Notes
Chemical mapping of a 177-nucleotide RNA with DMS and 2A3. For DMS, 1,169 sequencing reads were counted. For 2A3 the reverse transcriptase was SuperScript II with manganese. Values are in units of 0.01, from 0 to 300, in steps of 10. The data come from the RNA Mapping Database (RMDB), library OK1LIB.
[RMDB]
RNA sequence: GGGAACGACUCGAGUAGAGUCGAAAAUGACAAGAUCCUAACAUACAUUGCUGCCGAUCACUGCCCGGUGGUCGAGGUGAACGGUGUGACCAUCCAAGUCGGGAGCAGGAGGUAUCCGGACGCGGUGUGCGUCCCCUCCUUUCGAGGAGGGGACGCAAAAAGAAACAACAACAACAAC
Reactivity to DMS in 0.01 (KOAc 150mM, MgCl2 10mM, bicine 150mM(pH8.5), 24C), signal-to-noise 2, nucleotides 027 to 126: u000g000a050c220a200a190g030a020u000c000c010u050a000a080c050a040u110a170c170a000u000u000g000c090u000g000c000c040g100a010u000c000a100c080u060g040c030c040c030g000g020u000g000g040u000c000g000a300g000g030u070g070a060a300c230g000g030u000g000u000g000a000c020c170a050u030c140c040a000a170g000u000c010g000g040g000a080g000c110a030g000g000a000g070g000u000a020u000c180c000g010g010a000c200g000c240g050g090u000g030
Reactivity to 2A3 in 0.01 (KOAc 150mM, MgCl2 10mM, bicine 150mM(pH8.5), 24C), signal-to-noise 2, nucleotides 027 to 126: u270g130a140c110a160a020g000a140u050c000c020u040a060a060c000a050u170a060c010a020u010u180g000c000u020g080c020c000g040a040u000c000a010c030u040g000c020c000c000g030g030u030g000g020u040c000g000a000g020g030u140g030a160a060c090g000g000u010g040u050g080a060c000c010a030u040c080c020a140a010g020u050c030g060g010g000a070g120c060a030g020g000a020g000g080u080a140u040c050c020g020g000a030c040g010c050g000g000u110g100